[RMDB]
RNA sequence: GGGAACGACUCGAGUAGAGUCGAAAAGAUAGUAGGUAUAGGAGCGGAAGAAAGGCAGAAAAUGUCGAGAGCGAAAGAACGGAGAAGUUCUCGUCCGUUCGAACGCGAACUGUACGAAAAUACUAGAGGGAUAUCUUAACUUCGGUUAAGAUAUCCCAAAAGAAACAACAACAACAAC
Reactivity to DMS in 0.01 (KOAc 150mM, MgCl2 10mM, bicine 150mM(pH8.5), 24C), signal-to-noise 3, nucleotides 027 to 126: g060a060u010a040g010u010a030g000g010u010a050u010a020g000g020a300g000c080g010g000a120a080g010a040a060a070g000g000c020a010g000a050a090a070a140u010g010u010c020g000a050g010a280g010c020g020a040a140a150g000a020a010c020g010g010a020g000a060a060g010u000u000c050u000c010g000u000c010c010g010u000u000c000g000a060a150c010g000c020g010a020a170c050u010g020u060a010c010g010a120a080a080a080u040a030c050u010a000g000a300
Reactivity to 2A3 in 0.01 (KOAc 150mM, MgCl2 10mM, bicine 150mM(pH8.5), 24C), signal-to-noise 2, nucleotides 027 to 126: g070a000u150a020g060u000a000g000g140u050a040u010a030g050g000a040g020c010g040g030a010a000g040a090a080a000g030g000c030a000g040a070a120a040a090u090g080u040c080g010a080g000a070g060c060g060a110a110a060g030a030a000c040g020g000a000g010a120a050g040u200u030c020u010c060g290u000c050c000g000u000u010c000g000a040a040c000g000c030g030a030a000c000u000g030u040a040c100g040a110a030a010a060u160a140c100u020a010g030a070